[RMDB]
RNA sequence: GGGAACGACUCGAGUAGAGUCGAAAAGUGCGAUUGGUUCCUUCGUUCGGCUGCCGGCGAGGAGGAGUACAAGGACUACUACAUGUGGCACCCGGGAUUCCUCGAUGAGGACGGAACCCGUCGCCCGCGUGCCGGCUCAGUUCGCUGAGCCGGCACGAAAAGAAACAACAACAACAAC
Reactivity to 2A3 in 0.01 (KOAc 150mM, MgCl2 10mM, bicine 150mM(pH8.5), 24C), signal-to-noise 1, nucleotides 027 to 126: g170u080g000c030g000a010u000u080g000g000u020u000c050c000u030u010c090g010u080u120c000g120g020c100u140g090c040c010g170g060c000g010a020g000g080a000g010g010a090g070u140a050c000a000a010g060g000a010c000u000a030c000u050a050c060a100u290g000u030g000g080c000a050c020c000c000g020g000g100a100u130u000c000c000u020c030g120a230u300g080a090g050g090a000c060g000g010a000a000c000c000c000g000u000c000g000c050c000c000g000
Structure probing data (2A3) for a 177-nucleotide construct. It was measured as part of the RMDB library OK1LIB. Values cover nucleotides 27 to 126. Values are in units of 0.01, from 0 to 300, in steps of 10.